Structure probing data (2A3 and DMS) for a 177-nucleotide construct. The DMS profile rests on 958 reads. For DMS the reverse transcriptase was MarathonRT. For 2A3 the reverse transcriptase was SuperScript II with manganese.
RNA sequence: GGGAACGACUCGAGUAGAGUCGAAAAGGGUUACUCCUUUGCGCUUUCAGCGCUCAAUUUGAUAAAGAUUCGCACCUCUAUCAAACCGGGUAACCCCACCUUUGGCAAGGCCUACUGUCAGAUUAAACUGAAGUCCUAGGUUCGCCUAGGACUUCAGAAAAGAAACAACAACAACAAC
Reactivity to 2A3 in 0.01 (KOAc 150mM, MgCl2 10mM, bicine 150mM(pH8.5), 24C), signal-to-noise 3, nucleotides 027 to 126: g020g000g000u000u000a000c010u160c030c000u030u140u080g010c010g000c010u070u300u300c190a040g000c020g000c030u040c020a030a110u000u010u010g060a030u030a020a060a030g040a030u060u170c040g000c050a020c010c000u000c000u010a040u010c000a030a000a020c040c020g000g010g010u000a000a000c000c000c000c010a100c000c000u060u040u030g000g000c010a060a080g060g020c010c040u050a080c040u060g010u020c010a010g010a190u070u280a060a100a050
Reactivity to DMS in 0.01 (KOAc 150mM, MgCl2 10mM, bicine 150mM(pH8.5), 24C), signal-to-noise 1, nucleotides 027 to 126: g000g000g000u000u000a000c020u000c000c260u060u050u040g060c000g000c000u000u050u000c130a100g030c000g070c000u020c100a170a060u040u000u030g000a000u000a090a070a000g000a120u000u000c300g000c170a180c300c000u000c000u000a010u000c040a000a030a010c300c150g000g000g000u000a000a000c000c000c000c000a090c020c060u060u000u090g030g000c000a120a050g090g070c000c050u000a000c100u030g000u000c000a010g000a080u040u000a030a190a090